[RMDB]
RNA sequence: GGGAACGACUCGAGUAGAGUCGAAAAGUUGACCGCUGAGCCGCGGACCAACACGUAGGUCCAGAUGACGUUGAAGAUCAUCAACAGGACGAGCCACGCGCCGCCGUUGUGCGAUCCGUAGAACCGGUCUAUCGGCGUUGUUCGCAACGCCGAUAGAAAAAGAAACAACAACAACAAC
Reactivity to DMS in 0.01 (KOAc 150mM, MgCl2 10mM, bicine 150mM(pH8.5), 24C), signal-to-noise 2, nucleotides 027 to 126: g000u020u000g000a060c030c030g000c050u010g030a120g000c100c090g000c030g000g020a040c030c000a060a090c060a210c100g010u030a040g000g030u020c040c010a070g020a020u020g020a030c140g040u000u020g000a110a100g010a100u000c000a010u030c030a070a060c220a210g000g000a050c080g000a120g050c000c040a080c070g000c110g010c000c030g000c090c060g000u000u000g000u020g000c040g000a040u010c000c030g000u020a050g030a170a160c190c000g000g010
Reactivity to 2A3 in 0.01 (KOAc 150mM, MgCl2 10mM, bicine 150mM(pH8.5), 24C), signal-to-noise 2, nucleotides 027 to 126: g080u060u040g030a070c000c010g000c020u060g090a030g050c050c040g000c040g030g020a160c110c010a040a050c090a030c130g100u150a050g050g040u000c000c000a000g030a080u030g040a000c050g050u100u080g110a110a020g030a170u010c000a000u000c000a020a090c000a110g040g000a040c000g010a030g040c000c000a110c040g000c050g020c020c030g060c000c000g010u080u020g030u010g060c010g040a060u010c000c000g000u040a010g020a080a080c030c000g000g000
An RNA of 177 nucleotides, treated with DMS and 2A3 and read out base by base. The data come from the RNA Mapping Database (RMDB), library OK1LIB. For 2A3 the reverse transcriptase was SuperScript II with manganese. The 2A3 profile rests on 946 reads.